RNA sequence: GGGAACGACUCGAGUAGAGUCGAAAAGAUAUGGAUCUAGAGUUCGCUUGGAUUUAUACACUAUAACCUAUGUCGGAAACGACAUAGGUUUAAGUGUAUUGUCAGCGAACGAUUGGAUCCUAAGUCAGACAAGCUAUAUGUUCGCAUAUAGCUUGUCAAAAGAAACAACAACAACAAC
Reactivity to 2A3 in 0.01 (KOAc 150mM, MgCl2 10mM, bicine 150mM(pH8.5), 24C), signal-to-noise 2, nucleotides 027 to 126: g040a020u060a100u230g000g020a000u000c040u100a080g020a030g130u010u010c010g010c060u130u280g150g000a050u110u300u120a030u040a000c020a000c010u060a050u050a210a000c020c000u020a000u000g010u010c000g080g000a170a040a060c020g000a000c010a020u000a000g000g000u000u000u000a000a000g000u020g000u000a000u010u010g020u020c000a000g030c000g030a000a010c000g000a010u000u070g000g000a000u000c000c000u000a110a000g080u100c100a050
Reactivity to DMS in 0.01 (KOAc 150mM, MgCl2 10mM, bicine 150mM(pH8.5), 24C), signal-to-noise 3, nucleotides 027 to 126: g000a040u000a300u010g020g000a000u000c000u000a050g010a300g000u000u000c000g020c000u000u020g030g000a020u000u000u000a000u000a010c010a010c010u000a280u010a000a010c000c000u000a010u000g000u000c010g000g010a150a140a200c000g020a020c010a010u000a000g000g010u000u000u000a020a040g020u000g010u000a000u000u000g020u020c000a030g000c000g000a020a000c000g000a160u020u020g020g000a020u000c000c010u000a020a120g020u000c070a130
The record gives the reactivity of an RNA of 177 nucleotides to 2A3 and DMS. For 2A3, 3,228 sequencing reads were counted. DMS adducts were read by reverse transcription with MarathonRT. It was measured as part of the RMDB library TTRINS. Reactivities are rounded to 0.1 and cut off at 0 and 3. The reactions ran in a buffer of 150 mM KOAc, 10 mM MgCl2 and 150 mM bicine (pH 8.5), at 24 C.